[RMDB]
RNA sequence: GGGAACGACUCGAGUAGAGUCGAAAAGCUGCUGGCGGCUGACCCCUUUGACAUGGAAGCGCAGGCCAAGAUCGCAGAGCGCAUCCGCCAGGCUCAGGUGGAGGAGAAUUAUCAGACGGCCUACGAGAUGGUUAUAUCGUUUCGACGAUAUAACCAUAAAAGAAACAACAACAACAAC
Reactivity to DMS in 0.01 (KOAc 150mM, MgCl2 10mM, bicine 150mM(pH8.5), 24C), signal-to-noise 4, nucleotides 027 to 126: g000c030u000g020c040u000g010g020c030g000g000c040u000g000a160c060c010c020c080u000u000u000g020a100c170a090u000g000g010a100a070g020c040g010c050a110g010g010c030c080a110a140g010a090u010c100g000c060a080g000a100g020c070g030c040a100u000c010c010g010c020c020a050g010g000c030u000c070a060g000g030u010g020g010a080g010g010a120g020a120a050u010u010a100u000c080a120g000a140c110g000g000c030c010u020a070c130g000a140g000
Reactivity to 2A3 in 0.01 (KOAc 150mM, MgCl2 10mM, bicine 150mM(pH8.5), 24C), signal-to-noise 1, nucleotides 027 to 126: g020c030u080g020c010u050g080g020c010g020g000c020u040g070a160c020c000c000c000u100u170u230g020a050c030a110u180g020g070a060a090g040c010g020c080a010g000g070c030c030a080a030g050a130u140c080g040c090a040g020a050g090c030g020c010a020u010c010c000g020c010c030a020g010g050c030u020c040a050g030g040u020g050g010a020g060g050a070g050a100a160u150u090a060u130c010a020g030a140c050g010g020c010c000u040a040c050g080a040g030